RNA sequence: GGGAACGACUCGAGUAGAGUCGAAAAAACCCAUGUCAGGUCGAUUGUAACUGCGGAUCGGCCUAACUAAGGCGUGGUUGGUGCGACGGUCCGGGACACCCGAGCCUGUCUCUCUGUGUAUGGUGACAAGUAUUAUCGCUUUCGAGCGAUAAUACUUAAAAGAAACAACAACAACAAC
Reactivity to 2A3 in 0.01 (KOAc 150mM, MgCl2 10mM, bicine 150mM(pH8.5), 24C), signal-to-noise 2, nucleotides 027 to 126: a000a000c030c010c000a050u050g050u040c060a020g000g000u020c000g000a000u000u050g090u140a120a050c040u090g010c040g070g000a000u000c000g020g000c020c000u010a000a000c000u020a020a040g040g000c010g070u050g010g000u070u080g010g020u050g000c020g070a090c040g030g020u050c020c010g020g010g030a060c030a080c040c060c000g050a010g030c000c030u050g030u000c000u000c010u010c000u080g000u030g040u090a090u110g070g000u020g040a030c020
Reactivity to DMS in 0.01 (KOAc 150mM, MgCl2 10mM, bicine 150mM(pH8.5), 24C), signal-to-noise 3, nucleotides 027 to 126: a110a040c020c000c020a110u030g010u010c050a030g000g000u000c000g000a020u010u000g010u020a100a120c160u030g000c100g020g000a020u000c000g030g000c010c000u000a010a020c030u030a130a140g000g000c080g050u030g010g000u040u000g000g000u000g010c100g000a140c120g000g020u010c050c060g000g000g020a080c090a070c040c000c000g000a110g000c000c020u030g010u010c060u010c030u010c030u000g020u000g000u010a070u010g000g000u010g000a080c120